RNA sequence: GGGAACGACUCGAGUAGAGUCGAAAAGCGAUGCAUGGAAGUUAAUGACGAGUGCGAGUAGUUAGCUAUGAGUAUGAGUUGUUGAUGGAAGUGGGCGUAACUAAUGGCAUGAGCAUAAGAACCCGUGAAAAGUACCACUGUUCGCAGUGGUACUUUUAAAAGAAACAACAACAACAAC
Reactivity to DMS in 0.01 (KOAc 150mM, MgCl2 10mM, bicine 150mM(pH8.5), 24C), signal-to-noise 3, nucleotides 027 to 126: g000c040g010a050u000g010c040a060u010g000g010a280a140g000u010u000a040a040u000g000a040c040g000a260g000u010g020c010g000a200g020u010a020g010u020u010a070g020c010u000a030u010g000a280g010u000a040u010g000a300g010u000u000g010u000u010g000a040u000g000g010a140a100g000u010g000g010g000c050g020u000a100a070c060u010a060a070u010g000g010c050a080u010g000a100g000c020a040u010a110a090g000a120a090c020c010c010g000u020g000
Reactivity to 2A3 in 0.01 (KOAc 150mM, MgCl2 10mM, bicine 150mM(pH8.5), 24C), signal-to-noise 4, nucleotides 027 to 126: g000c000g030a050u080g030c000a010u020g020g040a040a010g010u010u020a040a010u060g010a020c020g010a000g020u030g000c010g000a010g000u010a010g000u060u180a100g070c010u020a010u090g050a050g040u040a050u070g060a010g030u000u000g010u000u010g010a030u010g020g030a020a040g040u040g040g060g000c040g030u070a090a050c020u020a060a050u070g030g000c030a030u150g070a030g020c010a030u040a170a030g030a060a040c010c000c020g040u040g070